[RMDB]
RNA sequence: GGGAACGACUCGAGUAGAGUCGAAAAGAUGAGAGUACACCUGUACGCGAAUAGGUGGGUUAGUACAGCAACUAACGAUUGUAUAGCUGUAUACAACGCGAAGAUCUCGUACUUCGAUACUCUCAGAGAUAGGUUACUACUUCGGUAGUGAUCUAUCAAAAGAAACAACAACAACAAC
Reactivity to 2A3 in 0.01 (KOAc 150mM, MgCl2 10mM, bicine 150mM(pH8.5), 24C), signal-to-noise 9, nucleotides 027 to 126: g170a060u070g000a000g000a000g000u010a010c040a030c030c020u020g020u060a040c050g020c030g070a060a040u080a070g060g020u020g020g040g000u030u040a020g010u010a010c010a010g000c020a040a020c040u120a070a060c090g180a190u110u190g040u060a100u060a080g010c020u010g030u020a000u010a020c110a060a010c020g020c010g090a050a020g040a130u030c040u020c050g010u040a020c000u020u040c030g000a000u000a010c000u000c000u000c010a000g000a000
Reactivity to DMS in 0.01 (KOAc 150mM, MgCl2 10mM, bicine 150mM(pH8.5), 24C), signal-to-noise 9, nucleotides 027 to 126: g000a160u000g000a010g000a010g010u000a020c020a040c060c040u000g010u010a060c160g010c180g000a070a050u010a040g000g010u010g010g010g010u010u000a120g010u000a010c010a020g010c050a090a080c150u010a090a100c190g000a200u030u030g010u010a060u020a120g010c040u010g000u000a020u010a060c130a020a020c010g000c020g000a090a070g000a100u020c040u010c110g000u020a040c000u000u000c130g000a280u010a000c000u000c000u000c000a030g010a130